[RMDB]
RNA sequence: GGGAACGACUCGAGUAGAGUCGAAAAGUGGAGAAACUCUAUUUAUCUUCACAUAGAGGGAUUAUCAAAGAUGACGAGGCCAAUUGGGUAGUGCCGUCUACCGAUGUUCGUGAUCUUCAAAACAAAGGUUGAAAUAGUUUUUCGAAACUAUUUCAACAAAAGAAACAACAACAACAAC
Reactivity to DMS in 0.01 (KOAc 150mM, MgCl2 10mM, bicine 150mM(pH8.5), 24C), signal-to-noise 8, nucleotides 027 to 126: g010u000g000g000a040g000a040a110a120c210u010c140u000a090u010u010u010a100u000c040u000u000c040a030c070a100u000a070g000a060g010g000g010a140u000u000a080u000c130a110a030a030g010a020u000g000a020c010g000a030g010g030c160c150a060a080u000u010g020g020g000u000a000g000u010g010c240c200g010u010c000u000a010c000c000g010a030u000g000u010u000c010g020u000g000a020u000c010u000u000c140a060a040a060a080c200a080a100a100g010
Reactivity to 2A3 in 0.01 (KOAc 150mM, MgCl2 10mM, bicine 150mM(pH8.5), 24C), signal-to-noise 6, nucleotides 027 to 126: g020u020g020g010a010g030a040a130a050c090u060c050u180a180u100u180u100a150u030c020u060u040c030a010c010a010u090a020g130a070g040g080g030a110u120u100a090u230c080a080a010a000g020a010u020g050a010c010g020a030g060g010c110c030a090a150u060u070g200g010g000u020a020g000u060g300c080c060g090u050c000u010a000c000c000g040a020u030g020u010u010c010g000u010g030a010u000c000u090u060c060a050a100a020a030c060a060a110a020g130

An RNA of 177 nucleotides, treated with DMS and 2A3 and read out base by base. For DMS the reverse transcriptase was MarathonRT. High DMS reactivity at an A or C suggests that its Watson-Crick edge is free. Reactivities are rounded to 0.1 and cut off at 0 and 3. The reactions ran in a buffer of 150 mM KOAc, 10 mM MgCl2 and 150 mM bicine (pH 8.5), at 24 C. 2A3 adducts were read by reverse transcription with SuperScript II with manganese.